[RMDB]
RNA sequence: GGGAACGACUCGAGUAGAGUCGAAAAAAAUUAUCUACAAAUGAACAAUUCCAGACAUUAAUUACAUCAGGUCAUUCUGAAUUUAAUUUAAGUGGCUUAGAUCCAGAUCAAUAUCCUUUAUUACCUCGUUGUCGCUUCAAUUCGUUGAAGCGACAACAAAAGAAACAACAACAACAAC
Reactivity to 2A3 in 0.01 (KOAc 150mM, MgCl2 10mM, bicine 150mM(pH8.5), 24C), signal-to-noise 2, nucleotides 027 to 126: a000a000a000u250u200a130u060c130u090a250c070a000a280a040u080g040a090a000c060a080a030u170u210c130c080a180g130a130c000a060u120u200a070a070u100u060a060c030a070u040c010a010g080g020u020c000a130u130u070c160u050g040a160a100u070u100u120a030a080u010u020u000a120a060g000u070g000g000c000u000u130a000g000a060u070c050c070a000g020a080u010c000a080a080u040a000u130c000c000u240u050u090a070u180u030a270c000c020u190c180
This 177-nucleotide RNA was probed chemically with 2A3. The reactions ran in a buffer of 150 mM KOAc, 10 mM MgCl2 and 150 mM bicine (pH 8.5), at 24 C. Source: RMDB library OK1LIB, as collected in RNAgym.